[RMDB]
RNA sequence: GGGAACGACUCGAGUAGAGUCGAAAAGGGGUCGUCGGGUAGGGACGGCGUAAGGCUUGGAUUUAUGGAGCUGAAGCCUCCACGGCUCCAUUGUCAGCCUUACUCGUCCCUAUAAUCCGACGACGGAGGCACCCAAAGUUAGCGUUUCGACGCUAACCAUGAGAUUACAGUUCGCUGUAAUCUCAUGAAAAGAAACAACAACAACAAC
Reactivity to DMS in 0.01 (KOAc 150mM, MgCl2 10mM, bicine 150mM(pH8.5), 24C), signal-to-noise 1, nucleotides 027 to 156: g000g010g010g020u010c000g020u000c010g020g010g010u010a050g020g030g020a020c010g040g000c160g020u000a010a030g000g050c030u000u010g010g020a060u000u000u000a020u020g020g010a060g000c000u010g010a070a140g010c070c000u000c010c020a300c000g000g040c010u020c000c020a020u000u020g010u000c060a130g000c010c000u000u000a000c020u010c000g010u000c000c000c000u000a020u000a030a060u000c010c010g010a050c020g000a000c050g000g030a030g030g030c050a160c010c000c020a060a110a090g010u000u000a000g040c000g010u000u000u000c300g020a090c010g010c000u000a000a000c000
Reactivity to 2A3 in 0.01 (KOAc 150mM, MgCl2 10mM, bicine 150mM(pH8.5), 24C), signal-to-noise 2, nucleotides 027 to 156: g040g020g000g000u000c000g000u000c010g000g040g000u040a020g010g000g000a000c000g000g020c150g030u020a000a010g010g040c070u170u300g190g000a050u160u200u170a030u060g000g010a000g000c010u010g040a130a020g060c020c020u030c010c000a040c010g010g000c000u010c000c000a000u000u020g020u020c040a020g000c000c000u000u020a000c000u000c010g000u000c000c000c000u000a000u000a010a000u000c000c000g000a010c000g000a000c000g000g010a000g000g030c030a100c000c000c000a020a030a020g010u010u000a000g000c010g000u030u170u150c260g050a020c000g000c000u000a000a000c000